[RMDB]
Structure probing data (2A3 and DMS) for a 207-nucleotide construct. Source: RMDB library OK3TST, as collected in RNAgym. For 2A3 the reverse transcriptase was SuperScript II with manganese. The 2A3 profile rests on 1,179 reads. Values cover nucleotides 27 to 156.
RNA sequence: GGGAACGACUCGAGUAGAGUCGAAAAUGUAGUGAAGUCAUUUGUUCUUGGAUUCUUCAUCUAGUGAACUGUAACCUUAUUUAGUAGCUGGAUACUUAGUAGGAACACUUUGGUUAGUUCUUGCCACUGAUUUAACAUGGUACACAUGUUGGGAUUGUCUCGUCUUAAGUUUCGACUUAAGACGAGAAAAAGAAACAACAACAACAAC
Reactivity to 2A3 in 0.01 (KOAc 150mM, MgCl2 10mM, bicine 150mM(pH8.5), 24C), signal-to-noise 2, nucleotides 027 to 156: u090g010u040a010g060u010g060a070a010g070u060c050a120u100u090u140g040u000u030c020u040u040g090g020a100u100u030c020u060u110c080a070u000c030u000a030g030u010g090a030a060c070u090g050u090a030a040c020c040u080u060a140u110u130u060a030g010u020a010g030c020u050g020g000a070u020a060c030u060u030a040g010u010a000g060g030a040a050c020a010c050u060u030u040g000g000u080u000a030g000u050u010c020u020u040g040c000c020a070c090u070g040a150u110u030u080a050a020c020a040u020g020g090u150a060c050a000c000a080u030g020u000u010g050g000g000a040u000u070g010
Reactivity to DMS in 0.01 (KOAc 150mM, MgCl2 10mM, bicine 150mM(pH8.5), 24C), signal-to-noise 2, nucleotides 027 to 156: u030g020u000a110g030u000g020a030a080g020u000c030a040u000u000u010g020u000u000c020u000u000g010g020a090u010u010c070u000u030c040a110u000c030u000a050g020u000g010a100a090c070u010g020u000a070a080c060c060u010u000a090u010u000u010a090g000u000a170g040c030u010g010g010a160u000a070c020u000u000a070g010u020a050g010g010a060a070c040a060c050u000u010u000g070g010u000u010a130g040u000u000c010u000u010g000c000c040a070c050u020g020a120u000u010u020a030a050c030a040u020g000g000u000a080c060a050c050a040u010g020u020u010g030g040g010a150u000u010g000